Chemical mapping of a 207-nucleotide RNA with 2A3. 2A3 adducts were read by reverse transcription with SuperScript II with manganese. The RNA was probed in 150 mM KOAc, 10 mM MgCl2 and 150 mM bicine (pH 8.5) at 24 C. High 2A3 reactivity points to a flexible backbone, as in loops and unpaired stretches. The 2A3 profile rests on 718 reads.
[RMDB]
RNA sequence: GGGAACGACUCGAGUAGAGUCGAAAAGUAUAGCGAAGUUGGAGGCGACGAGCUAUACGAUGAAUCAGCCUCGAUUGAUAUCGGUAUACAGAUCAGCGGCGAUCAGAUACCGUAAUUAGUAGCCGCAAUCCGGAGUGGAGACGCACGACGGUCGUCAGGGAGCAUACCUAUUCGUAGGUAUGCUCCCAAAAGAAACAACAACAACAAC
Reactivity to 2A3 in 0.01 (KOAc 150mM, MgCl2 10mM, bicine 150mM(pH8.5), 24C), signal-to-noise 1, nucleotides 027 to 156: g000u000a000u000a000g000c010g110a130a000g040u010u040g050g000a020g110g000c020g030a050c000g010a000g010c010u000a000u000a000c000g000a030u090g120a000a080u080c100a000g020c030c000u070c050g100a190u000u300g030a040u080a040u180c010g000g000u000a010u000a000c120a000g000a030u000c010a000g000c000g000g000c030g000a000u010c000a000g000a100u000a010c010c000g000u010a000a010u000u060a000g060u020a000g010c030c000g120c000a010a080u000c000c000g000g050a020g000u070g020g070a060g050a160c050g000c110a000c030g030a000c000g030g000u120c030g010u060c020a140